[RMDB]
RNA sequence: GGGAACGACUCGAGUAGAGUCGAAAAUAGCCAAUUUAGCUUCAUAAACCCAGGGAUGACGCAGAGCCGAUUUUAGGGUGCCUAUUGUCCAUGUAAACGAUGUUGAAUAUCUUCAUCACAUACCGGGUUAUUCGUUAAUAUUCGUAUUAACGAAUAAAAAAGAAACAACAACAACAAC
Reactivity to DMS in 0.01 (KOAc 150mM, MgCl2 10mM, bicine 150mM(pH8.5), 24C), signal-to-noise 9, nucleotides 027 to 126: u020a090g010c020c060a080a110u020u020u020a100g010c030u010u010c070a070u020a060a090a090c020c010c010a090g010g000g010a050u010g010a070c100g010c060a080g010a300g010c030c030g000a080u010u010u020u020a100g010g010g020u010g000c060c020u010a070u010u010g000u010c020c030a060u020g010u010a050a060a100c200g010a040u000g010u000u000g010a110a130u020a110u020c020u000u000c010a020u000c020a050c200a100u010a060c040c080g010g000g010
Reactivity to 2A3 in 0.01 (KOAc 150mM, MgCl2 10mM, bicine 150mM(pH8.5), 24C), signal-to-noise 9, nucleotides 027 to 126: u130a010g040c010c010a030a020u100u120u120a060g010c010u040u050c040a070u110a110a080a050c010c000c010a010g040g020g010a050u070g010a020c030g010c060a020g010a020g090c010c020g060a080u040u050u040u210a100g040g010g020u030g020c010c000u060a070u070u090g020u000c010c010a030u080g030u100a040a060a030c080g010a020u020g020u040u020g060a150a060u100a090u180c010u020u010c010a020u010c000a010c010a060u070a050c020c030g040g010g000
An RNA of 177 nucleotides, treated with DMS and 2A3 and read out base by base. Conditions: 150 mM KOAc, 10 mM MgCl2 and 150 mM bicine (pH 8.5), 24 C. Values cover nucleotides 27 to 126.